[RMDB]
RNA sequence: GGGAACGACUCGAGUAGAGUCGAAAAAUCGCGUGUCAGAAGCGCGCGGUGAAUACGUCCCUGCUCCUUGCACACACCGCCCGUCAAAGCACCCGAGUGGGGUCCGGAUGAGGCCGUCAUGCGACGGUUAUCUCGCAAGUUUCGACUUGCGAGAUAAAAAAGAAACAACAACAACAAC
Reactivity to DMS in 0.01 (KOAc 150mM, MgCl2 10mM, bicine 150mM(pH8.5), 24C), signal-to-noise 5, nucleotides 027 to 126: a020u000c000g010c020g020u010g020u010c030a190g000a140a200g000c000g000c020g000c000g010g000u010g000a120a130u010a120c160g010u010c000c000c000u010g010c050u020c020c020u010u000g000c040a080c080a100c080a080c050c010g000c010c010c010g030u000c070a060a110a110g000c050a060c070c020c040g010a090g020u000g010g000g000g010u010c020c040g000g000a090u010g000a090g010g020c000c000g010u000c000a150u030g010c150g000a030c010g010g000
Reactivity to 2A3 in 0.01 (KOAc 150mM, MgCl2 10mM, bicine 150mM(pH8.5), 24C), signal-to-noise 6, nucleotides 027 to 126: a000u010c000g000c010g010u000g090u120c070a110g050a230a020g080c000g000c000g000c000g000g000u020g010a040a060u160a090c070g060u040c010c000c000u000g030c010u020c020c010u040u090g010c020a040c000a000c010a000c040c030g020c010c000c010g040u070c050a100a060a000g020c010a060c010c000c000g030a050g060u120g010g020g000g000u000c020c030g020g040a070u070g030a090g040g040c010c010g030u030c010a060u200g100c110g040a010c000g030g000